[RMDB]
RNA sequence: GGGAACGACUCGAGUAGAGUCGAAAAGCAACAUUCCGAGGGGACCGUCCCUCGGUAAUGGCGAAUGGGACCCAGAACUCUCUCUAGAUUCCCAGAGAGAAUCGAGAGAAAACUGGCUCUCCCUUAGACAGUCCCUCCUUCGGGAGGGACAAAAGAAACAACAACAACAAC
Reactivity to DMS in 0.01 (KOAc 150mM, MgCl2 10mM, bicine 150mM(pH8.5), 24C), signal-to-noise 4, nucleotides 027 to 129: g050c060a100a200c030a020u000u000c010c030g010a000g040g000g050g010a090c220c300g080u100c000c020c020u020c000g000g010u000a000a000u050g010g030c090g020a050a080u060g040g020g010a000c240c010c010a030g000a190a110c220u000c010u010c030u000c020u060a030g030a020u040u000c020c030c160a010g040a180g000a190g060a040a000u020c040g010a040g010a030g140a020a020a110a170c000u000g030g010c080u010c060u010c000c000c000u000u000a080g000a080c120a130
Reactivity to 2A3 in 0.01 (KOAc 150mM, MgCl2 10mM, bicine 150mM(pH8.5), 24C), signal-to-noise 3, nucleotides 027 to 129: g010c010a000a080c000a010u010u020c000c000g030a000g000g020g000g090a140c010c070g300u300c040c000c000u000c000g000g000u000a000a020u010g000g000c040g010a090a030u120g030g010g000a030c010c020c010a020g020a040a020c000u000c000u000c000u000c020u020a040g000a020u000u000c020c050c170a040g050a000g000a030g000a080a000u000c030g000a030g010a000g000a020a020a000a020c000u000g000g010c000u000c000u000c020c010c000u000u020a070g010a010c050a010
Source information
Conditions: 150 mM KOAc, 10 mM MgCl2 and 150 mM bicine (pH 8.5), 24 C. An RNA of 170 nucleotides, treated with DMS and 2A3 and read out base by base. For 2A3 the reverse transcriptase was SuperScript II with manganese. Values cover nucleotides 27 to 129.